[RMDB]
RNA sequence: GGGAACGACUCGAGUAGAGUCGAAAAUGUGCGGCUCUACGCGAAUUUAUAUCCGUGUUUUGCGUAGGUCGCAGUGGCAUGCACUGCCAUGCCAGGCGCUGCACGAGGAGGUAGCUUCCGCCAGUGAAGUCUCUCGUGCAUUCGUGCAUGAGGGGCUAAAAGAAACAACAACAACAAC
Reactivity to 2A3 in 0.01 (KOAc 150mM, MgCl2 10mM, bicine 150mM(pH8.5), 24C), signal-to-noise 9, nucleotides 027 to 126: u240g020u030g010c000g000g000c020u030c010u220a000c000g000c010g010a000a010u050u230u060a270u080a090u160c120c130g090u110g060u100u020u030u150g000c000g000u000a010g000g010u010c000g000c000a000g010u020g010g000c000a010u030g000c070a080c300u190g030c100c000a000u010g000c000c000a010g030g010c030g000c010u020g000c020a010c040g030a070g060g040a040g030g050u070a030g020c000u030u010c010c020g040c030c020a040g030u070g160a050
Reactivity to DMS in 0.01 (KOAc 150mM, MgCl2 10mM, bicine 150mM(pH8.5), 24C), signal-to-noise 9, nucleotides 027 to 126: u030g010u010g010c000g010g000c010u050c000u000a000c000g010c000g010a010a010u020u020u040a090u030a090u050c150c160g010u020g010u000u000u000u010g010c000g010u000a010g010g010u000c010g000c000a010g010u010g000g010c010a010u000g000c040a190c180u020g000c090c000a010u000g000c020c010a060g000g000c070g020c150u000g000c020a050c020g000a070g010g010a090g000g010u020a110g010c050u000u000c010c020g010c170c100a100g000u030g000a120

Overview
Chemical mapping of a 177-nucleotide RNA with 2A3 and DMS. 2A3 is a SHAPE reagent: it acylates the 2'-hydroxyl of flexible nucleotides of all four kinds. DMS adducts were read by reverse transcription with MarathonRT. It was measured as part of the RMDB library OK1LIB. The 2A3 profile rests on 194,683 reads.